[RMDB]
RNA sequence: GGGAACGACUCGAGUAGAGUCGAAAAGACCAAUCGUUCGCGAUUGGUCAAAAGGUGGAUGCUACGCUACCGAAGUACCAAAAGUGCAGCUACAAAGCACAAAAACUUGGUUGUUCGCAACCAAGAAUCACACGUAAUUGUUCGCAAUUACGUGUGAAAAAGAAACAACAACAACAAC
Reactivity to DMS in 0.01 (KOAc 150mM, MgCl2 10mM, bicine 150mM(pH8.5), 24C), signal-to-noise 3, nucleotides 027 to 126: g000a020c010c010a010a000u010c010g010u000u000c190g060c020g020a000u000u000g000g000u010c000a000a040a050a110g000g020u000g000g020a120u010g010c160u010a070c170g000c010u010a000c030c000g000a100a090g000u000a190c010c030a040a070a100a120g010u000g010c010a040g030c130u000a210c170a100a090a090g000c050a040c080a040a060a050a060a100c010u000u000g000g000u000u000g000u010u010c190g010c000a060a000c000c000a000a000g000a110a130
Reactivity to 2A3 in 0.01 (KOAc 150mM, MgCl2 10mM, bicine 150mM(pH8.5), 24C), signal-to-noise 3, nucleotides 027 to 126: g000a000c000c000a000a010u000c010g050u030u030c270g000c010g110a010u000u020g000g000u000c000a010a000a010a030g040g010u020g000g050a070u130g070c100u130a060c190g020c040u010a010c010c020g010a050a010g050u040a050c000c000a070a010a040a000g000u010g010c000a010g000c000u020a020c070a120a150a030g040c040a020c010a010a050a030a050a050c020u000u020g030g000u010u020g040u050u120c250g000c090a000a010c000c000a010a000g000a000a050